[RMDB]
RNA sequence: GGGAACGACUCGAGUAGAGUCGAAAAGGACAGUCAUAUGACUUUAAACAGUUGUCUCGUGGUGAACGUACUCGUGUAAUCAUUGCGUUGAACCUAGCGUUCCGAGAUACUUACGAGUCACUUUAUCGCCUAAGAACGAGUUCGCUCGUUCUUAGGCAAAAGAAACAACAACAACAAC
Reactivity to DMS in 0.01 (KOAc 150mM, MgCl2 10mM, bicine 150mM(pH8.5), 24C), signal-to-noise 2, nucleotides 027 to 126: g000g020a120c140a040g000u030c100a170u040a120u010g010a100c010u000u000u000a060a100a130c180a120g000u000u000g010u000c000u000c110g040u020g010g000u000g010a050a040c260g030u000a060c040u000c010g000u000g010u000a010a050u000c030a170u000u000g020c090g000u010u030g020a010a020c020c040u000a100g000c170g000u000u000c010c000g010a080g020a020u000a010c140u000u010a020c010g020a000g000u000c130a030c060u000u000u010a050u000c110
Reactivity to 2A3 in 0.01 (KOAc 150mM, MgCl2 10mM, bicine 150mM(pH8.5), 24C), signal-to-noise 2, nucleotides 027 to 126: g070g000a090c060a010g020u060c020a020u120a100u300g010a010c000u050u050u110a060a080a030c050a060g010u060u040g010u030c020u000c040g110u110g000g000u000g020a060a020c030g010u080a010c010u000c050g000u030g010u080a080a020u040c040a050u040u300g050c030g070u050u080g000a000a030c010c010u020a080g020c040g160u020u020c000c000g030a020g010a030u050a020c010u050u020a000c030g000a010g030u030c030a010c000u020u090u050a090u070c060
An RNA of 177 nucleotides, treated with DMS and 2A3 and read out base by base. For DMS, 1,418 sequencing reads were counted.